[RMDB]
RNA sequence: GGGAACGACUCGAGUAGAGUCGAAAACUCACAGACACUCUCAGUCUGUCAGAGUGAGUCUGAGAGUCACACUGACACUGUGUGAGACACUCUGUCAGACACAGUCACAGUCUCUGACUCAGUGAGAGCUAGACAAUACCUUCGGGUAUUGUCUAGCAAAAGAAACAACAACAACAAC
Reactivity to DMS in 0.01 (KOAc 150mM, MgCl2 10mM, bicine 150mM(pH8.5), 24C), signal-to-noise 3, nucleotides 027 to 126: c000u000c010a170c040a070g010a030c040a100c070u010c030u000c010a070g010u000c040u020g010u000c130a040g000a060g020u010g000a090g030u010c020u000g000a120g000a040g000u000c020a050c130a090c020u000g000a150c230a060c030u000g040u000g020u000g000a300g010a090c020a110c180u020c220u000g000u000c010a050g010a050c020a000c020a000g000u010c130a300c070a070g010u000c050u000c070u000g010a020c000u000c070a110g030u000g000a010g010a040
Reactivity to 2A3 in 0.01 (KOAc 150mM, MgCl2 10mM, bicine 150mM(pH8.5), 24C), signal-to-noise 2, nucleotides 027 to 126: c010u000c000a010c000a020g030a010c020a010c060u040c020u000c040a040g060u000c050u060g090u070c030a010g030a010g100u070g030a040g110u010c030u070g070a050g010a020g170u000c010a040c000a010c020u020g140a030c010a020c150u030g000u000g010u020g050a060g000a000c000a010c050u210c110u120g010u010c000a020g020a120c000a000c000a030g000u040c030a020c010a070g050u010c030u000c000u070g030a020c010u020c030a020g000u060g020a050g010a020

The record gives the reactivity of an RNA of 177 nucleotides to DMS and 2A3. The reactions ran in a buffer of 150 mM KOAc, 10 mM MgCl2 and 150 mM bicine (pH 8.5), at 24 C. Values cover nucleotides 27 to 126. The 2A3 profile rests on 3,938 reads. The data come from the RNA Mapping Database (RMDB), library OK2TRN.